RNA sequence: GGGAACGACUCGAGUAGAGUCGAAAACACAUACUAUUUGCAUUGCACAGCGAUAGUAUGGAUGGGACAUUGGUAUUUACAGUACUAAUGCAAAUACUGUAUUUUUCUAUAUAGUGCGCAAUAUGUACUGUUCCACUAGAUUCGUCUAGUGGAACAGAAAAGAAACAACAACAACAAC
Reactivity to 2A3 in 0.01 (KOAc 150mM, MgCl2 10mM, bicine 150mM(pH8.5), 24C), signal-to-noise 9, nucleotides 027 to 126: c020a000c000a000u010a000c010u010a010u040u050u300g030c040a060u050u200g010c020a020c020a030g000c000g010a000u000a000g000u000a000u000g010g020a080u090g050g090g020a020c030a080u050u100g030g020u040a040u060u130u070a050c040a010g010u000a010c020u080a050a110u070g040c040a040a060a030u110a070c040u040g050u060a080u030u110u010u050u010c090u020a140u010a060u050a150g010u020g000c020g000c010a030a100u130a070u290g060u050a050
Reactivity to DMS in 0.01 (KOAc 150mM, MgCl2 10mM, bicine 150mM(pH8.5), 24C), signal-to-noise 4, nucleotides 027 to 126: c040a130c000a010u000a000c000u000a000u010u000u040g090c010a050u010u010g010c090a060c110a200g010c010g000a000u000a000g000u000a000u000g000g000a100u000g010g000g010a080c120a060u020u000g010g020u010a020u000u020u030a050c170a110g000u000a000c060u030a040a060u000g000c090a090a060a100u030a040c050u000g000u000a020u010u010u000u000u010c070u010a090u020a080u020a070g020u000g000c080g010c180a070a080u020a100u010g030u010a090